The record gives the reactivity of an RNA of 177 nucleotides to 2A3 and DMS.
Reactivities are given for positions 27 through 126.
For 2A3 the reverse transcriptase was SuperScript II with manganese.

RNA sequence: GGGAACGACUCGAGUAGAGUCGAAAAGAACACACGAAGCCACGCGUAGAAAGACGGAGCGAAAAGGGAUUUGGAGGAAAACUCAACUAGUGGCGAGCUCGAAAGCUCCGAGAAAGCGAGUGUGGAAGGGUAACUUAUACUUCGGUAUAAGUUACCCAAAAGAAACAACAACAACAAC
Reactivity to 2A3 in 0.01 (KOAc 150mM, MgCl2 10mM, bicine 150mM(pH8.5), 24C), signal-to-noise 4, nucleotides 027 to 126: g090a040a010c010a000c000a000c050g020a080a020g000c010c000a010c020g000c030g050u160a040g110a150a040a010g160a040c010g000g010a000g020c040g080a090a000a060a080g070g020g070a150u150u130u230g090g010a050g010g080a060a110a070a060c030u030c010a080a060c070u060a020g030u030g070g000c040g020a040g000c030u050c060g000a020a050a000g020c010u000c000c000g020a030g080a020a030a010g000c030g030a030g010u020g020u030g000g040a060a110
Reactivity to DMS in 0.01 (KOAc 150mM, MgCl2 10mM, bicine 150mM(pH8.5), 24C), signal-to-noise 3, nucleotides 027 to 126: g010a190a060c020a040c030a010c000g000a150a140g000c000c000a070c050g000c070g020u040a100g030a060a090a150g040a130c010g050g000a020g000c030g020a010a070a190a080g000g040g010a170u020u040u020g000g010a120g020g000a050a060a070a150c060u000c040a090a280c080u030a140g000u000g000g000c040g000a050g010c020u000c080g000a080a070a100g020c040u020c000c040g000a020g000a090a100a110g000c030g000a080g000u000g000u000g030g000a040a150